[RMDB]
RNA sequence: GGGAACGACUCGAGUAGAGUCGAAAACACGAAUGUUGGCUAAUCCUGGUCGGACAUCAGGGGGUUAGUGCAGUGGCAUAAGCCAACUUGGCGCUAAUAGAUACUAAUCGUAGCAUAGCUGAAUAAAAUACGUAUUUAGUUUCGACUAAAUACGUAUAAAAGAAACAACAACAACAAC
Reactivity to DMS in 0.01 (KOAc 150mM, MgCl2 10mM, bicine 150mM(pH8.5), 24C), signal-to-noise 9, nucleotides 027 to 126: c060a110c210g020a100a070u010g000u010u000g010g000c030u010a060a100u020c010c020u000g000g010u020c140g010g010a270c110a020u000c030a030g000g000g010g000g010u000u000a020g020u000g010c020a090g010u000g010g000c020a170u040a120a140g010c000c000a010a060c080u020u030g010g010c010g020c010u000a020a040u020a070g000a080u000a050c110u010a060a060u010c110g010u010a050g010c050a090u000a040g010c020u000g000a070a070u030a060a070a060
Reactivity to 2A3 in 0.01 (KOAc 150mM, MgCl2 10mM, bicine 150mM(pH8.5), 24C), signal-to-noise 9, nucleotides 027 to 126: c100a010c040g090a170a120u180g010u100u020g040g010c030u030a030a030u030c000c000u020g010g030u040c090g100g060a030c020a050u030c010a010g000g000g000g020g020u030u050a020g010u020g010c020a040g030u050g070g000c020a080u090a300a090g000c010c000a040a050c040u040u070g120g000c010g000c010u000a020a020u060a150g060a030u070a110c030u090a090a110u080c050g050u050a010g030c040a080u070a040g010c040u040g040a130a060u140a150a130a010
An RNA of 177 nucleotides, treated with DMS and 2A3 and read out base by base. Reactivities are given for positions 27 through 126. 2A3 adducts were read by reverse transcription with SuperScript II with manganese. The RNA was probed in 150 mM KOAc, 10 mM MgCl2 and 150 mM bicine (pH 8.5) at 24 C.